[RMDB]
RNA sequence: GGGAACGACUCGAGUAGAGUCGAAAACGGUCGAAAUUCGUUUCGACCGAAUAUGCUAGCUGAGGACAGCUGCAAUGCUAAGCUGAAAGCCAGCUGCAAGCGCGAGUUCGGCGUUCGCGCCGAACAAGAUCACUUACGGCUUCGGCCGUAAGUGAUCAAAAGAAACAACAACAACAAC
Reactivity to DMS in 0.01 (KOAc 150mM, MgCl2 10mM, bicine 150mM(pH8.5), 24C), signal-to-noise 1, nucleotides 027 to 126: c030g010g000u000c000g010a000a000a000u000u020c230g010u010u000u010c000g000a010c000c000g010a030a030u000a200u000g010c000u020a050g000c000u000g010a190g000g010a300c010a010g020c010u000g000c090a100a170u000g020c100u000a080a030g000c010u000g000a030a100a170g010c170c000a010g000c000u010g000c100a080a080g010c110g020c130g030a260g020u000u000c010g000g000c000g010u000u000c220g000c050g010c000c000g010a040a000c010a060a020
Reactivity to 2A3 in 0.01 (KOAc 150mM, MgCl2 10mM, bicine 150mM(pH8.5), 24C), signal-to-noise 1, nucleotides 027 to 126: c010g000g010u020c010g000a030a010a010u120u120c150g080u000u010u000c010g000a000c000c000g010a000a030u090a010u000g020c030u060a030g000c020u020g010a020g030g080a050c020a010g000c000u000g040c080a240a000u190g010c010u090a110a050g000c000u000g000a190a020a000g080c020c000a000g010c000u110g000c050a100a020g030c040g000c060g030a130g110u020u020c010g000g010c000g050u000u050c170g040c000g010c070c000g020a020a000c010a000a000